[RMDB]
RNA sequence: GGGAACGACUCGAGUAGAGUCGAAAAUGGCAUUUCGAUGCCACGUCUUCCUAAGUCUUUAUUUCGACGCUCGUCACGCGAAGAACAUGGUCGGAAACGACCAUGGGAGCGUGAUAGAGCGUGUAAAGAUAUGGAUAUUAUUAGCGUUCGCGCUAAAGCUUGCAUAAUACUUCGGUAUUAUGCAAGCAAAAGAAACAACAACAACAAC
Reactivity to DMS in 0.01 (KOAc 150mM, MgCl2 10mM, bicine 150mM(pH8.5), 24C), signal-to-noise 2, nucleotides 027 to 156: u000g020g050c020a060u010u020u000c300g000a020u000g010c000c000a010c010g000u000c090u000u060c020c000u000a100a210g020u000c000u020u030u000a000u030u000u000c050g030a040c000g040c010u020c000g020u000c020a000c000g000c000g000a180a260g000a070a210c000a000u000g020g000u000c000g000g000a220a080a230c020g040a050c000c010a030u000g010g000g020a220g000c010g020u000g000a030u000a020g050a020g040c000g000u000g020u010a000a010a050g020a060u000a300u000g010g010a190u010a110u000u010a230u000u000a040g010c020g030u000u000c220g010c000g010c010u000a010a010a170
Reactivity to 2A3 in 0.01 (KOAc 150mM, MgCl2 10mM, bicine 150mM(pH8.5), 24C), signal-to-noise 3, nucleotides 027 to 156: u030g000g010c010a010u050u130u170c300g130a010u020g000c010c000a010c020g110u000c060u100u050c010c000u040a150a090g010u000c020u040u070u020a090u060u120u210c140g070a010c010g000c000u000c000g000u000c000a000c000g070c020g170a300a040g010a050a020c000a000u000g000g000u000c000g000g050a080a090a090c010g010a000c000c000a000u000g000g000g010a020g000c000g000u000g000a000u020a140g010a000g000c000g000u000g000u000a010a000a000g010a010u030a060u160g030g030a060u070a110u300u110a100u060u030a080g000c010g040u070u070c280g010c010g000c150u080a040a090a010